[RMDB]
RNA sequence: GGGAACGACUCGAGUAGAGUCGAAAACAAAAAUAGUAAAGUGCAGCUCGGUGAGUACAUUUUCGAGCGCAUUGAUUAUAGUGAUGCUGUAUCCUACAAGUCUAGUACAACGUAUAAACUGACUGUACAUAGCGUAUUGCUUCGGCAAUACGCUAUGAAAAGAAACAACAACAACAAC
Reactivity to 2A3 in 0.01 (KOAc 150mM, MgCl2 10mM, bicine 150mM(pH8.5), 24C), signal-to-noise 2, nucleotides 027 to 126: c010a000a080a010a050a010u100a040g050u060a060a120a060g020u000g000c020a020g000c070u000c040g000g000u040g010a070g070u130a060c060a190u060u100u040u080c010g000a000g000c010g000c000a000u010u020g010a020u110u110a070u050a100g100u070g070a040u080g010c080u040g000u080a080u040c000c000u020a010c020a100a040g010u000c020u160a010g020u040a030c030a160a020c200g130u130a050u040a160a110a020c020u000g020a000c040u010g000u000a010
Reactivity to DMS in 0.01 (KOAc 150mM, MgCl2 10mM, bicine 150mM(pH8.5), 24C), signal-to-noise 2, nucleotides 027 to 126: c020a000a080a070a150a030u020a070g010u000a050a040a060g020u000g010c000a070g030c010u000c000g020g000u000g000a120g000u000a060c170a090u000u000u000u000c020g010a040g020c010g000c010a020u000u000g000a160u010u000a040u000a060g000u010g000a160u010g010c110u010g000u000a070u000c020c010u020a070c090a070a040g000u000c020u010a040g000u000a070c100a040a080c190g020u010a090u020a080a080a050c050u000g000a040c020u000g000u000a140